About this RNA:
This 177-nucleotide RNA was probed chemically with 2A3 and DMS. The reactions ran in a buffer of 150 mM KOAc, 10 mM MgCl2 and 150 mM bicine (pH 8.5), at 24 C.

RNA sequence: GGGAACGACUCGAGUAGAGUCGAAAAAUCACUAUGUUAAAGCAUCAAGCCUCCAGGUGCUUGCAAAAGUGACCGGAAACGGUAAAGCAUAGUGAAGACCUGAAGGAGGCACGGGUCAAAAUAAAAAGCUGGUAGAUCUGUUCGCAGAUCUACUAGCAAAAGAAACAACAACAACAAC
Reactivity to 2A3 in 0.01 (KOAc 150mM, MgCl2 10mM, bicine 150mM(pH8.5), 24C), signal-to-noise 9, nucleotides 027 to 126: a000u020c000a000c000u000a010u010g050u100u110a150a070a010g000c000a010u010c030a040a060g000c000c000u000c000c000a010g000g000u000g000c000u020u060g000c010a020a050a080a140g150u120g080a010c000c000g010g000a070a060a030c020g000g010u070a110a040a000g010c000a000u000a000g000u010g010a020a030g010a020c000c010u040g070a130a070g020g000a000g010g000c010a010c010g010g000g000u030c030a000a030a090a040u200a040a090a040a020a010
Reactivity to DMS in 0.01 (KOAc 150mM, MgCl2 10mM, bicine 150mM(pH8.5), 24C), signal-to-noise 3, nucleotides 027 to 126: a100u000c000a000c000u010a000u010g000u000u000a100a110a030g000c000a000u030c000a040a140g020c020c000u030c000c020a140g010g010u010g000c000u000u010g000c230a060a070a090a090g010u020g000a040c000c000g000g000a100a070a180c020g000g000u000a060a060a080g000c000a000u000a020g000u000g010a010a100g000a020c030c010u000g020a060a090g010g010a000g000g010c020a220c050g020g000g000u000c010a150a080a080a110u030a080a090a100a130a110
Source: RMDB library OK1LIB, as collected in RNAgym. 2A3 adducts were read by reverse transcription with SuperScript II with manganese.